[RMDB]
RNA sequence: GGGAACGACUCGAGUAGAGUCGAAAAGGAGUUGAUCGACCGCUACCCCCUGCGUGGCAUCAAGGGCCCGAUGGGCACCGGUCAGGACAUGCUCGAUCUGCUGGGCGGUGACCGUGCGGCGCUGGCCAACCCUGUACGAUUUCGAUCGUACAGGGUUAAAAGAAACAACAACAACAAC
Reactivity to 2A3 in 0.01 (KOAc 150mM, MgCl2 10mM, bicine 150mM(pH8.5), 24C), signal-to-noise 2, nucleotides 027 to 126: g050g030a040g010u040u020g040a070u020c020g030a030c010c000g020c060u120a120c010c020c000c040c000u040g040c000g040u040g020g070c010a060u130c170a240a140g080g010g000c050c000c030g090a100u200g010g000g040c030a020c010c020g050g120u080c020a010g070g020a080c080a100u280g050c040u070c080g110a180u020c030u090g060c010u000g010g020g070c000g060g000u000g000a030c010c010g030u070g060c030g010g000c060g000c050u050g000g030c000c010
Reactivity to DMS in 0.01 (KOAc 150mM, MgCl2 10mM, bicine 150mM(pH8.5), 24C), signal-to-noise 4, nucleotides 027 to 126: g000g010a090g010u000u000g010a070u010c040g010a100c040c020g010c060u010a200c050c020c000c040c040u000g010c090g030u010g000g010c020a070u010c080a090a100g000g010g020c020c010c010g020a070u010g000g010g010c020a030c050c010g000g000u000c000a030g010g000a100c150a080u010g020c080u000c070g000a080u000c070u000g010c030u000g010g000g020c000g010g010u000g020a030c010c010g010u010g010c150g010g010c040g020c030u000g000g020c000c020
Structure probing data (2A3 and DMS) for a 177-nucleotide construct.